Record summary:
Structure probing data (DMS and 2A3) for a 177-nucleotide construct. Values cover nucleotides 27 to 126. For 2A3 the reverse transcriptase was SuperScript II with manganese. It was measured as part of the RMDB library OK2TST. For DMS, 18,821 sequencing reads were counted.

RNA sequence: GGGAACGACUCGAGUAGAGUCGAAAACAUCACCGAUACCAUCCUGGAUCUCACCAUGAGAGAGGGUGAGCUCCCCCUGGAGGUACGGGAACGAACCCCUCUGGUGGUGACCCUGUUCACCCAGGACCUCUAGAUUAUUAUUCGUAAUAAUCUAGAGAAAAGAAACAACAACAACAAC
Reactivity to DMS in 0.01 (KOAc 150mM, MgCl2 10mM, bicine 150mM(pH8.5), 24C), signal-to-noise 9, nucleotides 027 to 126: c120a100u010c090a170c050c040g010a120u010a080c120c080a170u000c010c010u000g000g010a100u010c100u000c000a020c020c020a030u000g000a040g000a030g010a130g020g000g010u000g010a280g010c040u000c010c010c060c180c090u000g020g010a140g010g010u010a050c260g000g000g010a020a020c040g000a130a060c020c000c000c020u000c010u000g010g070u000g000g010u000g000a040c090c070c050u000g000u010u000c090a100c100c010c020a070g000g010a070c300
Reactivity to 2A3 in 0.01 (KOAc 150mM, MgCl2 10mM, bicine 150mM(pH8.5), 24C), signal-to-noise 9, nucleotides 027 to 126: c020a070u120c050a030c090c030g050a060u070a160c020c030a100u030c000c010u020g010g020a060u050c010u000c040a000c010c000a030u170g050a020g010a000g080a120g050g000g000u010g000a010g010c010u020c010c000c000c000c020u050g140g070a120g070g060u080a060c060g000g000g010a000a010c020g000a010a020c010c000c000c000u010c010u050g090g000u010g010g010u010g010a010c030c000c010u070g100u090u100c030a050c010c010c000a010g000g020a040c010